Overview
Source: RMDB library M2RFPK, as collected in RNAgym. This 207-nucleotide RNA was probed chemically with 2A3 and DMS. The DMS profile rests on 5,344 reads. 2A3 adducts were read by reverse transcription with SuperScript II with manganese.
[RMDB]
RNA sequence: GGGAACGACUCGAGUAGAGUCGAAAAGCUCCUUUGCGCUUUUUUUUCGGAUUAGGCGUAGAGGCGAAAGUCACCCUCCUCGCAUCGCAAGUUCGUGCUUGCGACUUACACGUAGGGCGAGGGGUGGAAAACAGUAUGGGAUUCGUCCCAUACUGAACACUAGGAGACAGUUCGCUGUCUCCUAGUGAAAAGAAACAACAACAACAAC
Reactivity to 2A3 in 0.01 (KOAc 150mM, MgCl2 10mM, bicine 150mM(pH8.5), 24C), signal-to-noise 4, nucleotides 027 to 156: g020c050u020c000c000u000u000u010g010c010g000c000u050u050u010u010u000u010u040u090c230g120g020a020u060u010a030g010g010c000g000u010a000g000a000g030g020c070g040a160a090a040g110u100c040a060c040c010c000u030c000c000u000c000g000c010a030u020c020g000c000a010a000g010u120u270c110g180u300g090c000u000u010g010c000g000a000c000u030u060a080c100a030c130g200u170a090g030g170g010c010g010a010g000g000g010g030u190g000g050a050a070a000a010c000a000g000u000a000u010g000g000g010a000u020u050c110g040u030c060c000c000a000u000a010c000u000g000a020a000
Reactivity to DMS in 0.01 (KOAc 150mM, MgCl2 10mM, bicine 150mM(pH8.5), 24C), signal-to-noise 2, nucleotides 027 to 156: g020c090u000c020c010u000u010u010g020c010g010c020u000u000u020u000u010u000u000u000c220g020g000a050u000u000a040g020g010c000g000u010a010g000a060g010g000c100g000a070a030a090g010u000c040a080c000c000c000u000c000c000u000c010g050c260a150u000c000g030c000a010a010g020u020u000c260g000u000g000c030u000u000g000c000g010a020c070u010u000a080c120a080c110g000u010a050g000g030g010c040g010a050g010g010g000g010u000g000g000a090a060a070a140c000a020g010u000a010u000g000g030g000a080u000u010c300g030u000c000c000c000a010u010a000c010u010g020a090a140